Structure probing data (2A3 and DMS) for a 177-nucleotide construct. Reactivities are given for positions 27 through 126.
RNA sequence: GGGAACGACUCGAGUAGAGUCGAAAAGAUAUGGAGCUCCUCUUUUGACGGCUGCACCAUCGGAAACGAUGGCCCAAGCCGAUAAGAGGGAGCUCCUAAGUCAAAGAACAGACUUCGGUCUGUUCAACAUUAGGGAUGAGUUCGCUCAUCCCUAAUGAAAAGAAACAACAACAACAAC
Reactivity to 2A3 in 0.01 (KOAc 150mM, MgCl2 10mM, bicine 150mM(pH8.5), 24C), signal-to-noise 4, nucleotides 027 to 126: g020a010u030a020u110g010g000a000g000c000u000c020c030u300c060u140u120u030u120g210a140c220g000g010c000u010g030c030a020c010c000a010u000c000g010g000a030a030a020c000g000a000u010g020g040c030c040c010a030a000g000c000c040g130a090u060a060a000g010a040g020g000g000a000g000c000u010c000c000u000a010a010g000u000c010a070a020a120g000a000a000c000a000g010a000c010u080u140c300g070g000u010c010u000g000u020u010c010a010a000
Reactivity to DMS in 0.01 (KOAc 150mM, MgCl2 10mM, bicine 150mM(pH8.5), 24C), signal-to-noise 8, nucleotides 027 to 126: g000a040u010a300u010g000g000a020g010c000u000c000c000u010c020u000u000u000u000g010a080c110g010g030c010u000g020c300a060c010c000a000u000c000g000g010a110a070a140c010g010a010u000g000g000c300c170c090a140a030g010c000c000g010a070u000a010a010g010a010g010g000g000a000g010c010u000c000c000u000a000a060g000u000c020a100a120a170g000a010a010c000a000g000a010c000u000u010c200g010g000u000c000u000g000u000u000c000a080a200

The RNA was probed in 150 mM KOAc, 10 mM MgCl2 and 150 mM bicine (pH 8.5) at 24 C.